[RMDB]
RNA sequence: GGGAACGACUCGAGUAGAGUCGAAAACUCGAAAGAGACCUGCAUAUCUUAGGCAGAUGACCAAGUCACGUCUGAAAAGCGAAAGCCCUAAGAUAUGCAGCUGUGAUGACUUGUCGCAGAAAAUAAAAGUAUGCUAUAGGUUCGCCUAUAGCAUACUAAAAGAAACAACAACAACAAC
Reactivity to DMS in 0.01 (KOAc 150mM, MgCl2 10mM, bicine 150mM(pH8.5), 24C), signal-to-noise 6, nucleotides 027 to 126: c000u010c010g000a100a100a090g000a040g000a140c230c000u000g000c000a010u000a000u000c000u000u010a000g010g000c010a030g000a010u010g000a080c180c020a010a010g010u010c000a300c020g000u000c000u000g020a150a060a140a120g010c010g000a140a120a080g000c020c000c000u000a000a000g000a010u000a000u000g000c000a000g000c020u000g010u020g010a020u010g000a010c010u000u000g010u010c000g000c010a020g010a160a090a060a070u050a050a090a090
Reactivity to 2A3 in 0.01 (KOAc 150mM, MgCl2 10mM, bicine 150mM(pH8.5), 24C), signal-to-noise 9, nucleotides 027 to 126: c000u000c010g030a010a040a010g070a010g020a040c010c000u000g000c000a000u000a000u010c000u000u000a000g000g010c000a000g000a020u010g010a030c060c020a010a000g010u010c010a000c070g020u000c000u010g110a230a190a130a030g020c020g040a080a030a010g000c000c000c000u000a000a000g000a000u000a000u000g000c000a000g000c000u000g000u010g010a030u070g010a020c010u010u030g000u020c000g000c010a010g090a030a090a020a010u300a020a080a010

This 177-nucleotide RNA was probed chemically with DMS and 2A3.
For DMS, 12,722 sequencing reads were counted.
The reactions ran in a buffer of 150 mM KOAc, 10 mM MgCl2 and 150 mM bicine (pH 8.5), at 24 C.
The 2A3 profile rests on 22,645 reads.
It was measured as part of the RMDB library OK1LIB.